[RMDB]
RNA sequence: GGGAACGACUCGAGUAGAGUCGAAAAUGCUCGCGCAAGUAAGCUCCGUUUUGUAUUGCCUGAUGUGCUUAGCGGGUAUUUAUUCGGGAUAGUAAGUUGAACGUUACAAGUGUCGUACCAACUUAUGAAUCUUAAACACUUGAGAUGAGUGUGGUAGCUUCUAUUUUAGGUUCGCCUAAAAUAGAAGAAAAGAAACAACAACAACAAC
Reactivity to DMS in 0.01 (KOAc 150mM, MgCl2 10mM, bicine 150mM(pH8.5), 24C), signal-to-noise 3, nucleotides 027 to 156: u000g010c000u000c010g030c010g030c140a050a090g040u000a110a090g010c030u000c020c040g020u000u010u000u010g020u000a090u010u000g020c050c010u010g000a070u010g040u000g000c010u000u000a070g010c040g000g000g020u010a030u010u010u000a090u010u000c060g020g000g000a040u000a190g010u000a010a020g010u000u000g010a040a030c020g000u000u000a300c070a080a170g030u010g020u000c040g010u000a150c020c010a010a020c010u000u010a020u000g000a130a120u000c060u000u010a070a070a050c030a030c010u000u000g010a200g010a090u010g010a040g010u000g020u000g000g020u000a090g010
Reactivity to 2A3 in 0.01 (KOAc 150mM, MgCl2 10mM, bicine 150mM(pH8.5), 24C), signal-to-noise 8, nucleotides 027 to 156: u030g000c010u010c010g000c000g010c080a060a070g080u110a050a020g030c030u020c070c050g040u030u050u130u150g140u080a180u090u190g060c020c030u090g070a090u100g050u040g020c020u030u030a010g000c000g000g000g020u010a010u000u060u010a050u040u100c020g010g000g000a000u010a020g010u010a010a010g000u000u010g020a060a010c030g020u070u110a040c070a160a140g060u060g030u200c010g000u010a080c050c010a000a000c000u010u000a020u050g040a060a090u000c010u030u080a040a070a000c020a010c000u030u070g050a050g050a210u240g010a040g030u030g010u040g040g040u040a030g020
About this RNA: Structure probing data (DMS and 2A3) for a 207-nucleotide construct. The reactions ran in a buffer of 150 mM KOAc, 10 mM MgCl2 and 150 mM bicine (pH 8.5), at 24 C. Source: RMDB library RSTRND, as collected in RNAgym.